This 177-nucleotide RNA was probed chemically with 2A3 and DMS.
2A3 adducts were read by reverse transcription with SuperScript II with manganese.
For 2A3, 551 sequencing reads were counted.
Source: RMDB libraries RFM100 and RFMREP, as collected in RNAgym.
RNA sequence: GGGAACGACUCGAGUAGAGUCGAAAAUACCUGUUACCUUAGCAAUAAGGUUACAGAUCAUGAUGAUUGGAUUCUAUGAAUACGUGAUUAUAUACCGUAUUUGUUUAGGGACUGCAACCCCUUUACGACUACACUGGUGCUUCGGCACCAGUGUAGUAAAAGAAACAACAACAACAAC
Reactivity to 2A3 in 0.01 (KOAc 150mM, MgCl2 10mM, bicine 150mM(pH8.5), 24C), signal-to-noise 2, nucleotides 027 to 126: u050a030c000c000u000g000u000u020a010c000c000u000u030a050g000c050a070a150u000a000a000g010g020u000u020a000c000a000g010a060u150c050a030u050g240a030u070g040a100u090u110g100g040a090u060u060c110u000a090u070g030a000a000u030a000c060g020u090g040a130u220u070a180u040a020u070a280c010c000g000u030a000u040u040u040g070u020u000u050a070g090g000g000a040c100u090g020c110a040a030c030c000c000c000u000u000u020a100c060g070
Reactivity to DMS in 0.01 (KOAc 150mM, MgCl2 10mM, bicine 150mM(pH8.5), 24C), signal-to-noise 2, nucleotides 027 to 126: u020a050c070c000u040g000u000u000a030c000c000u030u010a000g000c300a050a150u000a000a030g000g070u000u020a010c000a030g040a060u010c190a060u010g000a110u000g000a130u080u000g000g000a110u010u040c000u010a060u000g010a040a010u020a030c010g010u020g000a140u010u050a140u070a190u020a120c080c010g000u000a030u000u000u010g000u000u000u000a000g000g060g010a070c060u000g040c180a090a060c270c010c010c000u000u010u000a060c070g000